[RMDB]
RNA sequence: GGGAACGACUCGAGUAGAGUCGAAAAGGGGUCCAACCUGAGCUCGUUUGACGUAUUAGACAUGCUCUGAAGCCUCCACGGAGCAACAGCUAAUACCGAGAGCUUUGGUUGGACGGAGGCACCCAAACAACGCCUGUGGUUCGCCACAGGCGUUGAAGUAAAUUUAGUCGUUCGCGACUAAAUUUACAAAAGAAACAACAACAACAAC
Reactivity to 2A3 in 0.01 (KOAc 150mM, MgCl2 10mM, bicine 150mM(pH8.5), 24C), signal-to-noise 1, nucleotides 027 to 156: g050g020g050g000u000c010c000a000a000c000c000u000g000a000g000c000u000c010g030u130u200u230g060a020c030g010u000a000u000u010a000g060a070c150a190u280g000c000u010c020u020g040a060a030g010c000c000u000c000c010a030c050g000g010a010g010c070a070a110c030a140g110c010u030a010a010u000a000c000c020g040a030g000a000g040c020u000u000u000g000g000u010u000g010g000a000c000g000g000a010g010g000c010a040c000c000c010a060a080a020c000a000a000c000g000c000c000u010g010u030g010g050u110u160c190g000c090c000a000c000a000g000g000c000g000u000u000g010a000a010
Structure probing data (2A3) for a 207-nucleotide construct. The reactions ran in a buffer of 150 mM KOAc, 10 mM MgCl2 and 150 mM bicine (pH 8.5), at 24 C. For 2A3 the reverse transcriptase was SuperScript II with manganese. It was measured as part of the RMDB library RNAMAK.